[RMDB]
About this RNA
Source: RMDB library RFM100, as collected in RNAgym. Structure probing data (2A3) for a 177-nucleotide construct. Values cover nucleotides 27 to 126. The RNA was probed in 150 mM KOAc, 10 mM MgCl2 and 150 mM bicine (pH 8.5) at 24 C.
RNA sequence: GGGAACGACUCGAGUAGAGUCGAAAAACGGCGCGCUACGGCGCGCCGAGGGGCGGGAGAGUUCACUCGGCACGCAUGCACGUGUAACCGCCAGUCCGUGCUUGCCUAGCGAACUCACCCGUCCCAAUCCGUUGAUUAGUUUCGACUAAUCAACGGAAAAAGAAACAACAACAACAAC
Reactivity to 2A3 in 0.01 (KOAc 150mM, MgCl2 10mM, bicine 150mM(pH8.5), 24C), signal-to-noise 1, nucleotides 027 to 126: a000c030g000g000c000g000c020g000c100u110a160c300g200g000c010g000c000g000c000c000g010a010g000g000g000g000c000g000g000g000a060g000a010g000u000u000c000a000c030u000c020g000g000c000a010c020g030c040a020u020g000c000a030c090g080u090g030u170a190a150c030c060g050c090c030a000g020u030c020c000g010u000g000c000u040u010g000c000c010u030a030g000c000g000a000a000c000u000c000a010c010c000c000g000u000c000c000c000a000a010